Source: RMDB library TTRDEL, as collected in RNAgym. The record gives the reactivity of an RNA of 177 nucleotides to DMS.
[RMDB]
RNA sequence: GGGAACGACUCGAGUAGAGUCGAAAAGAUAUGGACUCACGGGAGCGUGGGAGUCGGAAACGACUCUCACGCUUUGAUCGUGACAUGUCCUAAGUCAAACAUCAUCUCCGUUCGCGGAGAUGAUGAAGCCUUAAUCACUCUUCGGAGUGAUUAAGGCAAAAGAAACAACAACAACAAC
Reactivity to DMS in 0.01 (KOAc 150mM, MgCl2 10mM, bicine 150mM(pH8.5), 24C), signal-to-noise 2, nucleotides 027 to 126: g010a030u000a050u010g000g010a020c000u000c010a000c000g000g000g000a000g030c020g040u000g000g000g000a000g010u000c010g020g010a030a010a010c000g010a020c000u000c000u000c000a000c000g020c000u000u000u000g000a100u010c020g000u000g020a060c300a080u010g010u000c020c010u000a000a140g000u000c010a130a090a300c010a000u000c010a020u000c000u010c000c000g050u010u000c300g010c010g020g000a000g000a000u000g000a000u010g010a030a080
The reactions ran in a buffer of 150 mM KOAc, 10 mM MgCl2 and 150 mM bicine (pH 8.5), at 24 C.